[RMDB]
RNA sequence: GGGAACGACUCGAGUAGAGUCGAAAAAGAAUUGUACCACCACUGCGUAUCCUAAACGGGCUCUGCAGUAGUUAUUCUUGUAAAGUACUAGGAGUGAAUAGUGGCCCGUAUUGCAGGCAUUAACAUUAAAAGGCAAUCCACUUCGGUGGAUUGCCAACAUACAUCGAACCUUCGGGUUCGAUGUAUGAAAAGAAACAACAACAACAAC
Reactivity to DMS in 0.01 (KOAc 150mM, MgCl2 10mM, bicine 150mM(pH8.5), 24C), signal-to-noise 2, nucleotides 027 to 156: a070g010a070a070u000u000g030u000a080c050c010a090c020c020a080c030u000g020c020g020u000a070u000c020c060u000a070a160a080c050g040g010g040c000u000c020u010g010c000a140g000u000a000g010u000u000a050u000u000c030u000u010g010u000a070a070a140g000u000a050c010u000a070g040g010a170g000u010g000a070a070u000a060g010u010g000g020c000c010c020g000u000a050u000u000g020c040a070g000g010c070a060u010u010a070a080c090a100u000u000a050a070a080a160g020g030c000a010a020u010c000c000a000c000u010u000c300g010g080u000g020g010a010u010u000g000c020c000a000a000
Reactivity to 2A3 in 0.01 (KOAc 150mM, MgCl2 10mM, bicine 150mM(pH8.5), 24C), signal-to-noise 2, nucleotides 027 to 156: a020g060a030a040u190u060g010u100a050c010c050a000c000c020a030c070u030g000c010g000u090a070u070c010c050u080a140a060a030c010g000g000g020c010u040c020u110g070c050a040g010u020a000g020u020u100a070u120u000c040u100u130g060u110a170a240a050g060u020a070c020u040a010g040g030a040g060u080g070a080a100u170a100g060u050g070g030c000c000c000g000u020a090u020u170g000c020a010g060g000c010a020u090u130a090a020c030a050u020u250a100a090a010a070g000g000c000a000a000u000c000c000a000c010u050u130c260g060g000u000g000g010a000u000u000g000c000c010a010a000